[RMDB]
RNA sequence: GGGAACGACUCGAGUAGAGUCGAAAAUGAAAUAGCGUGUGCAAGACGCUGAUCUUGCCAUGAUCUGGAACUUUAGUGCUGAGGUCCGAGUUCGAGGGUAUCAUGUCGGACCUUAGCACUAAUUAAACAAACGGUACUACUUCGGUAGUACCGUUUGAAAAGAAACAACAACAACAAC
Reactivity to 2A3 in 0.01 (KOAc 150mM, MgCl2 10mM, bicine 150mM(pH8.5), 24C), signal-to-noise 2, nucleotides 027 to 126: u200g010a060a020a060u150a060g030c000g010u020g080u100g010c020a020a000g030a000c040g090c300u100g050a200u000c000u000u020g010c000c000a010u030g020a090u050c040u050g090g050a040a050c010u040u020u010a010g010u000g000c010u020g020a000g040g010u010c000c010g000a020g080u100u140c070g040a080g090g170g050u300a060u240c020a040u160g150u110c000g010g000a000c000c000u000u000a000g000c000a000c000u000a000a000u000u010a000a000a000
Reactivity to DMS in 0.01 (KOAc 150mM, MgCl2 10mM, bicine 150mM(pH8.5), 24C), signal-to-noise 4, nucleotides 027 to 126: u010g010a090a100a140u010a080g010c020g030u000g000u020g010c020a020a010g010a020c020g020c260u010g000a080u000c010u000u000g010c010c000a010u000g000a100u000c040u000g010g000a120a150c100u000u000u000a000g010u000g010c000u000g000a000g010g000u000c000c000g010a060g000u000u010c190g010a020g000g010g010u010a050u000c020a080u000g010u000c010g000g000a020c000c000u000u000a000g000c000a000c000u010a000a010u000u010a050a070a170
Structure probing data (2A3 and DMS) for a 177-nucleotide construct. The DMS profile rests on 5,618 reads. Reactivities are given for positions 27 through 126. High 2A3 reactivity points to a flexible backbone, as in loops and unpaired stretches. For 2A3 the reverse transcriptase was SuperScript II with manganese. The data come from the RNA Mapping Database (RMDB), library M2PK90.